[RMDB]
The record gives the reactivity of an RNA of 177 nucleotides to 2A3 and DMS. 2A3 adducts were read by reverse transcription with SuperScript II with manganese. The RNA was probed in 150 mM KOAc, 10 mM MgCl2 and 150 mM bicine (pH 8.5) at 24 C.
RNA sequence: GGGAACGACUCGAGUAGAGUCGAAAAGUACCAGCAGAGAUCCGGAUGAUAACAUGUGAUGUUAUCCCAUGACUUAUAAGAACGUCGUAUGGGAACAGUGCAGGGUCAUUGAGGUCGAGAAUCAAGGUGAUGCUACCUAAUUCGUUAGGUAGCAUCAAAAAGAAACAACAACAACAAC
Reactivity to 2A3 in 0.01 (KOAc 150mM, MgCl2 10mM, bicine 150mM(pH8.5), 24C), signal-to-noise 3, nucleotides 027 to 126: g050u010a040c000c000a030g020c020a030g020a000g010a050u000c000c000g020g000a000u020g000a000u010a140a110c010a080u000g000u010g010a030u010g000u030u060a070u060c000c000c000a000u010g000a000c000u030u070a070u060a290a090g110a110a110c040g000u000c000g100u120a020u020g000g010g000a010a010c000a010g040u060g040c020a000g040g020g020u000c000a000u010u060g040a050g050g010u060c020g000a000g050a180a060u220c110a050a030g100g000
Reactivity to DMS in 0.01 (KOAc 150mM, MgCl2 10mM, bicine 150mM(pH8.5), 24C), signal-to-noise 6, nucleotides 027 to 126: g020u020a160c010c020a110g010c180a100g000a160g010a010u010c010c080g010g010a030u000g000a030u010a060a080c040a060u010g020u000g000a060u000g000u000u020a080u000c010c010c010a000u010g000a010c000u010u020a140u030a170a130g010a100a150c210g000u000c020g030u070a030u010g000g010g000a050a030c010a040g000u010g000c030a030g000g000g010u000c010a040u000u000g000a100g020g000u000c030g010a140g020a060a100u010c090a080a170g000g010